[RMDB]
RNA sequence: GGGAACGACUCGAGUAGAGUCGAAAACCGAGGGGGGGUGCUUGGAGCACGGGGGUCCCAGUGGAUCCGUGGGAUGCUCCUCCCGAUUCCGAUAUCCCUUCCCCCGAGAGGUCCCCCAGGAAUGGCGUAGCUGUAUGCUUCGGCAUACAGAAAAGAAACAACAACAACAAC
Reactivity to DMS in 0.01 (KOAc 150mM, MgCl2 10mM, bicine 150mM(pH8.5), 24C), signal-to-noise 9, nucleotides 027 to 129: c070c030g010a080g010g000g010g020g030g000g020u010g040c120u030u020g010g000a140g040c050a090c060g000g010g000g000g010u030c030c010c050a050g010u070g020g010a060u030c070c050g040u010g010g030g000a120u010g020c090u010c050c010u020c020c010c000g020a240u010u010c020c030g000a090u040a110u010c020c010c030u000u070c010c000c000c010c020g010a070g010a140g020g010u030c030c030c000c030c000a100g020g000a110a080u040g010g000c090g030u020a060g020
Reactivity to 2A3 in 0.01 (KOAc 150mM, MgCl2 10mM, bicine 150mM(pH8.5), 24C), signal-to-noise 9, nucleotides 027 to 129: c010c010g010a100g000g000g000g010g000g000g000u030g010c040u030u060g040g020a030g020c070a050c090g010g000g000g000g010u030c010c010c010a070g070u190g130g070a090u050c040c040g110u060g000g020g010a030u090g070c050u040c020c010u040c020c010c000g010a020u050u000c010c000g010a020u010a060u110c020c000c000u070u230c040c000c000c000c010g080a090g010a010g020g060u030c010c000c000c000c010a020g040g060a110a110u090g050g000c120g050u100a040g030